[RMDB]
RNA sequence: GGGAACGACUCGAGUAGAGUCGAAAACGAAUGCUACGGCAUUCGAGUUAUCUCGUUCGCGAGAUAACAACAGAACGUUCGCGUUCUGAGAGCCUCGUGAGAGGCUCAGCUGUUCCGUACGCGGAACAGCAGUAUCCGUUCGCGGAUACAACUAUAGCGGUGACGCUAUAGAGGAUACGUACGCGUAUCCAGGUUAACCGUUCGCGGUUAACCAACUAAUCGGUGACGAUUAGAUACUACUUGCUCAUUUGUAGUCUAAAUGAGAUAAGGUGGAGUUCGCUCCACCUAAAAGAAACAACAACAACAAC
Reactivity to 2A3 in 0.01 (KOAc 150mM, MgCl2 10mM, bicine 150mM(pH8.5), 24C), signal-to-noise 9, nucleotides 027 to 266: c010g000a000a000u000g000c010u030a030c240g120g000c000a000u000u000c000g000a010g000u000u000a000u000c000u000c000g020u070u060c240g010c010g110a000g000a000u000a000a000c000a000a010c010a000g000a010a000c000g020u060u080c250g040c010g100u000u000c030u010g070a080g000a000g120c000c010u010c010g030u100g070a180g000a000g020g010c000u000c000a000g000c000u000g000u010u000c010c000g010u030a030c300g030c020g100g010a000a000c000a000g000c000a000g000u000a000u000c010c010g020u030u050c230g030c010g130g000a000u000a000c010a020a010c000u000a000u000a000g000c000g020g030u030g030a010c010g000c000u000a000u000a000g070a030g000g000a000u000a000c000g020u020a020c270g010c000g150u000a000u000c000c000a000g000g000u000u000a000a000c010c010g020u050u060c280g040c010g150g000u000u000a000a000c000c000a000a020c000u000a000a000u000c010g030g090u100g090a050c010g000a000u000u000a000g010a020u090a060c010u010a000c000u010u010g010c000u010c010a030u030u020u010g060u050a150g300u080c060u080a010a000a000u010g010a010g020a010u060a050
Reactivity to DMS in 0.01 (KOAc 150mM, MgCl2 10mM, bicine 150mM(pH8.5), 24C), signal-to-noise 3, nucleotides 027 to 266: c000g000a020a010u000g000c000u000a070c160g030g000c000a000u000u000c000g000a140g000u000u000a000u000c000u000c000g010u010u030c130g020c000g010a010g020a010u010a000a000c000a210a300c000a000g000a010a010c000g020u000u010c200g020c010g020u000u000c010u000g000a230g000a020g000c010c000u010c010g020u040g000a200g010a010g000g030c000u010c000a020g010c010u000g000u000u000c000c000g050u000a120c200g040c000g000g010a030a000c010a000g000c010a060g000u000a000u010c000c000g010u000u030c190g020c010g010g010a010u000a000c010a170a200c010u000a010u000a000g000c010g020g000u000g000a080c010g010c000u000a000u010a010g000a150g000g000a010u000a000c000g030u000a090c260g050c010g010u000a000u000c000c010a100g000g000u000u000a000a010c000c000g010u000u020c190g010c010g000g000u010u000a010a000c000c010a050a080c010u000a010a000u000c000g000g000u020g000a200c010g010a020u000u000a000g000a160u020a300c020u000a010c010u000u000g010c000u000c020a010u000u000u000g000u000a000g000u010c080u010a000a010a010u000g000a010g000a000u030a110